[RMDB]
RNA sequence: GGGAACGACUCGAGUAGAGUCGAAAAGAUAUGGAUGUACCAGCCGAUAAGCUGUGUAUCGGAAACGAUACCAGCUUUUGACGGCUGAGUACAUCCUAAGUCAAACGAAACGCUUCGGCGUUUCGAAGAUCUAGAGCUACUUCGGUAGCUCUAGAUCAAAAGAAACAACAACAACAAC
Reactivity to 2A3 in 0.01 (KOAc 150mM, MgCl2 10mM, bicine 150mM(pH8.5), 24C), signal-to-noise 1, nucleotides 027 to 126: g010a010u050a020u130g000g000a010u000g000u000a010c000c010a000g000c020c050g190a140u120a280a010g000c020u000g090u030g010u300a010u000c000g020g000a070a040a010c000g010a000u000a000c020c000a020g050c000u000u000u010u030g050a050c050g000g040c020u020g000a000g000u010a000c000a000u000c000c000u000a000a000g000u000c050a050a090a080c000g000a000a000a000c000g020c030u100u090c300g210g000c000g020u000u010u000c000g010a030a030
Reactivity to DMS in 0.01 (KOAc 150mM, MgCl2 10mM, bicine 150mM(pH8.5), 24C), signal-to-noise 2, nucleotides 027 to 126: g020a010u010a260u000g000g010a000u000g010u000a000c000c000a010g010c000c010g020a140u000a010a000g010c000u010g020u010g030u000a000u010c010g040g000a040a050a120c010g010a020u000a010c010c000a000g000c000u000u000u000u000g010a150c100g020g000c000u010g000a070g010u000a020c000a000u000c000c000u010a000a080g020u010c030a150a180a300c020g000a000a030a020c000g020c010u000u010c260g030g010c000g000u000u000u010c010g010a130a110
Structure probing data (2A3 and DMS) for a 177-nucleotide construct.
DMS adducts were read by reverse transcription with MarathonRT.
The RNA was probed in 150 mM KOAc, 10 mM MgCl2 and 150 mM bicine (pH 8.5) at 24 C.